Structure probing data (2A3 and DMS) for a 177-nucleotide construct.
[RMDB]
RNA sequence: GGGAACGACUCGAGUAGAGUCGAAAAUAUCUGCACCCGCUGACCGGCGAGGUUAUCCGCCAGGUCGACUCGCUGCGGAUCUUUCCCGCUACCCAUUACGUCGCCGGUCCGGAGCGGAUGGCGCAUGGCGGUACUGUUGAUUCGUCAACAGUACCGCAAAAGAAACAACAACAACAAC
Reactivity to 2A3 in 0.01 (KOAc 150mM, MgCl2 10mM, bicine 150mM(pH8.5), 24C), signal-to-noise 1, nucleotides 027 to 126: u110a000u000c000u020g000c010a050c000c000c060g000c140u120g010a000c000c010g000g030c000g030a030g000g080u060u080a050u060c000c010g020c050c040a070g010g040u050c060g030a060c010u020c040g080c060u040g010c000g010g000a020u040c070u000u050u020c020c010c000g000c040u120a090c000c050c020a100u140u090a060c090g160u040c010g020c010c020g060g000u000c000c040g080g000a020g020c040g020g010a040u040g050g000c100g010c090a080u120g200
Reactivity to DMS in 0.01 (KOAc 150mM, MgCl2 10mM, bicine 150mM(pH8.5), 24C), signal-to-noise 1, nucleotides 027 to 126: u000a040u000c020u000g010c020a080c130c010c020g010c170u010g000a020c010c010g000g000c010g000a070g000g010u000u010a050u000c050c030g030c050c060a050g010g020u030c110g000a020c060u000c030g000c140u010g020c020g000g010a020u000c150u000u000u000c030c000c000g000c140u010a070c020c060c020a110u000u000a070c040g010u040c010g000c000c000g010g000u000c020c110g040g020a240g000c000g000g000a010u010g010g000c070g000c090a110u000g010